[RMDB]
Structure probing data (DMS and 2A3) for a 177-nucleotide construct.
Values cover nucleotides 27 to 126.
Conditions: 150 mM KOAc, 10 mM MgCl2 and 150 mM bicine (pH 8.5), 24 C.
RNA sequence: GGGAACGACUCGAGUAGAGUCGAAAAACGGUGUACGCACCGAGGUGGCUCUGGUCCAUUUCCCUGCCAUUCCCUUGGCUUCAAUUUACUCCCAGGGCUGGCAGUGAGAUGGGUCAAGGCUCACAAACCCUCAAGAAUAAUUCGUUAUUCUUGAGGGAAAAGAAACAACAACAACAAC
Reactivity to DMS in 0.01 (KOAc 150mM, MgCl2 10mM, bicine 150mM(pH8.5), 24C), signal-to-noise 9, nucleotides 027 to 126: a110c020g000g010u000g020u010a070c220g050c020a010c000c010g020a150g020g020u000g000g010c010u000c060u010g010g000u000c000c000a020u000u000u000c000c060c000u000g000c000c000a030u010u020c040c000c010u000u010g020g000c300u000u020c200a080a120u020u020u030a140c200u010c090c010c030a040g000g000g020c300u000g000g000c010a010g000u000g000a020g000a010u010g000g000g000u000c000a000a030g010g010c000u010c020a000c030a030a110a160
Reactivity to 2A3 in 0.01 (KOAc 150mM, MgCl2 10mM, bicine 150mM(pH8.5), 24C), signal-to-noise 9, nucleotides 027 to 126: a010c020g000g000u020g020u060a060c230g020c070a000c000c000g000a060g040g070u030g000g000c000u000c020u050g000g010u000c000c000a000u000u000u000c020c010c000u000g000c000c010a020u230u300c010c000c000u010u020g020g000c020u080u050c050a090a180u080u140u270a110c080u060c010c000c010a000g000g000g000c000u000g000g000c000a000g000u000g000a000g000a000u000g010g010g000u000c000a000a000g000g000c010u210c040a020c010a010a060a040
DMS adducts were read by reverse transcription with MarathonRT.